[RMDB]
RNA sequence: GGGAACGACUCGAGUAGAGUCGAAAAUAGCCUGGUAGGCAGCAUUCAGUCCUCCUAUGUCUUCUUUCUCCUGUUGUGGUUUUUCUUCUGAAACAAAAGAAGAAAUUGUCAAAUCAGACUUGCCCUCUAUAGAAUCUUGCUUCGGCAAGAUUCUAUAAAAAGAAACAACAACAACAAC
Reactivity to DMS in 0.01 (KOAc 150mM, MgCl2 10mM, bicine 150mM(pH8.5), 24C), signal-to-noise 1, nucleotides 027 to 126: u010a130g000c010c000u000g010g000u020a070g020g000c030a050g010c110a150u000u070c110a250g010u000c010c000u000c000c030u000a040u010g020u000c030u020u010c000u020u010u010c090u000c010c100u010g030u040u000g060u000g010g010u000u000u000u000u000c010u000u000c010u000g000a140a030a050c250a080a070a140a120g000a040a020g000a020a010a020u020u000g060u000c000a010a120a100u010c080a130g010a070c080u000u000g040c010c010c000u020c090